[RMDB]
Structure probing data (DMS and 2A3) for a 207-nucleotide construct. DMS adducts were read by reverse transcription with MarathonRT. The DMS profile rests on 3,903 reads. It was measured as part of the RMDB library M2RFPK.
RNA sequence: GGGAACGACUCGAGUAGAGUCGAAAAAGACCACCUCUACGGAGGUGGUCAAGUCACGUAGCUAGUACCAGGUUGCAAUACUAGACCGUUAGUCCUGGGGCGUACGGUGGCAGUACGCUGCCACCGAUAAAACUUGAAUACUUCGGUAUUCAAGUAAACUUAUUUACCUCUUCGGAGGUAAAUAAGUAAAAGAAACAACAACAACAAC
Reactivity to DMS in 0.01 (KOAc 150mM, MgCl2 10mM, bicine 150mM(pH8.5), 24C), signal-to-noise 2, nucleotides 027 to 156: a170g010a050c010c010a020c000c000u000c010u000a130c300g100g010a020g050g010u000g000g030u010c000a010a010g010u000c120a050c070g010u010a080g030c020u010a030g000u000a040c020c010a050g000g030u020u000g010c020a050a060u000a020c010u000a030g000a090c070c030g030u000u000a060g010u000c010c010u000g000g010g010g020c110g010u000a030c000g000g030u000g020g080c010a030g010u010a060c240g020c040u010g000c010c000a010c000c010g000a020u000a020a090a060a090c000u000u010g000a030a020u000a010c000u000u010c300g040g010u000a010u010u000c020a010a020g000u000a010a040
Reactivity to 2A3 in 0.01 (KOAc 150mM, MgCl2 10mM, bicine 150mM(pH8.5), 24C), signal-to-noise 2, nucleotides 027 to 156: a000g000a000c000c010a010c000c000u000c000u010a070c300g090g000a000g000g020u000g010g010u000c000a000a000g020u000c010a000c040g000u010a010g020c000u000a000g010u050a220c010c000a010g000g020u010u010g030c000a000a010u000a000c000u000a000g020a080c030c060g150u100u140a010g050u120c010c000u000g020g010g020g120c130g060u140a040c020g010g000u010g030g000c000a000g000u020a020c220g000c100u000g000c000c000a000c000c000g010a000u030a020a080a010a010c000u000u000g000a000a000u000a000c000u020u040c150g080g010u000a010u000u000c000a000a000g000u000a050a000